[RMDB]
RNA sequence: GGGAACGACUCGAGUAGAGUCGAAAAGCUACAGGAGGACGCGGGCUGGCAGGCUUGGUUCCUGGCGAGUUUCUAAGCCCCCGCCUGCGGUCUGAGGCACCGGCUGAACCAUGUCGGAGAUCCUGUGCCAGUGGCUCAACAAGGAGUUGAAGGUGUACCCUAUUUACGGGUUCGCCCGUAAAUAGGGAAAAGAAACAACAACAACAAC
Reactivity to 2A3 in 0.01 (KOAc 150mM, MgCl2 10mM, bicine 150mM(pH8.5), 24C), signal-to-noise 1, nucleotides 027 to 156: g030c010u030a010c080a050g010g120a000g010g000a030c000g030c010g010g000g040c020u030g040g000c160a030g010g000c030u000u000g000g000u020u040c020c020u040g040g130c160g010a060g010u060u060u060c020u050a010a010g000c000c000c000c000c000g010c000c000u020g000c030g000g140u010c010u040g010a080g030g010c010a010c010c010g100g000c110u040g010a180a090c070c000a080u260g210u240c120g000g000a020g010a100u000c000c000u040g000u030g000c000c000a030g010u080g030g030c000u000c030a000a120c010a100a070g160g010a060g050u080u060g110a080a070g100g040u070g030u180a030
Annotation
Source: RMDB library OK3TST, as collected in RNAgym. The record gives the reactivity of an RNA of 207 nucleotides to 2A3. For 2A3, 524 sequencing reads were counted. The RNA was probed in 150 mM KOAc, 10 mM MgCl2 and 150 mM bicine (pH 8.5) at 24 C.